[RMDB]
RNA sequence: GGGAACGACUCGAGUAGAGUCGAAAACAGCAAUUAUUCGUAAUUGCUGAAUGGCGGACCCAGCGCGGAAGGAGCGCCCAGGACUCCUUCGCCGCCUUUUAAUAAGCAGGUACUUCGGUACCUGCAAACACGAAGUUGUUUUCGAACAACUUCGUGUAAAAGAAACAACAACAACAAC
Reactivity to DMS in 0.01 (KOAc 150mM, MgCl2 10mM, bicine 150mM(pH8.5), 24C), signal-to-noise 2, nucleotides 027 to 126: c000a000g000c000a010a020u010u000a020u000u000c220g020u000a000a000u000u000g020c000u000g000a030a050u000g000g030c010g000g010a150c030c000c040a170g010c180g040c100g030g010a010a000g010g010a030g010c070g020c110c070c120a100g010g000a290c010u000c010c000u010u000c010g050c020c000g010c000c020u000u000u000u000a050a170u010a080a160g000c010a000g000g010u000a000c000u000u000c190g040g010u000a010c000c000u000g000c010a030a040
Reactivity to 2A3 in 0.01 (KOAc 150mM, MgCl2 10mM, bicine 150mM(pH8.5), 24C), signal-to-noise 2, nucleotides 027 to 126: c000a010g000c000a010a000u020u020a000u090u170c190g050u080a010a000u000u000g000c000u000g000a010a090u100g010g030c040g000g000a060c010c030c030a100g110c200g020c060g160g020a010a010g020g010a000g040c050g050c040c100c000a070g110g030a140c000u010c000c000u000u000c000g010c000c020g000c000c000u090u190u010u090a220a170u180a120a060g020c000a000g000g000u010a010c000u000u090c160g080g000u000a010c000c020u000g010c000a000a000

Chemical mapping of a 177-nucleotide RNA with DMS and 2A3. The RNA was probed in 150 mM KOAc, 10 mM MgCl2 and 150 mM bicine (pH 8.5) at 24 C.